[RMDB]
RNA sequence: GGGAACGACUCGAGUAGAGUCGAAAAUGCCGGCUCUGGGGCCAGUGCGGGGUCUGCCCCGAGCUCCUCUGCAGCCAUACCAGCCGACCGGCGGGGGACACACGGCGCCUCGGCCCGACUCGGAGGCGAUCUGACAAGUUUUCGAACUUGUCAGAUCAAAAGAAACAACAACAACAAC
Reactivity to DMS in 0.01 (KOAc 150mM, MgCl2 10mM, bicine 150mM(pH8.5), 24C), signal-to-noise 2, nucleotides 027 to 126: u000g010c060c040g040g010c020u010c010u000g000g020g010g030c200c170a070g000u010g010c050g030g020g010g030u010c160u010g000c000c030c020c020g000a110g010c040u000c030c010u000c040u010g010c110a030g020c020c040a110u000a300c040c040a080g000c070c020g020a070c030c100g020g000c000g000g000g000g000g010a070c080a100c170a160c180g020g000c060g000c020c010u000c010g020g040c020c020c000g000a080c150u000c020g020g000a120g000g030c130
Reactivity to 2A3 in 0.01 (KOAc 150mM, MgCl2 10mM, bicine 150mM(pH8.5), 24C), signal-to-noise 1, nucleotides 027 to 126: u060g010c010c010g020g010c020u000c010u060g060g000g030g030c080c080a020g010u040g070c050g040g020g020g020u100c120u290g210c020c020c010c000g030a020g000c020u040c000c000u060c010u000g050c040a020g030c000c000a020u060a040c000c020a040g030c010c000g040a060c010c020g050g010c040g020g010g000g000g000a020c070a010c010a020c240g110g070c060g090c070c020u050c010g080g010c000c030c010g030a050c030u020c050g040g020a030g010g040c030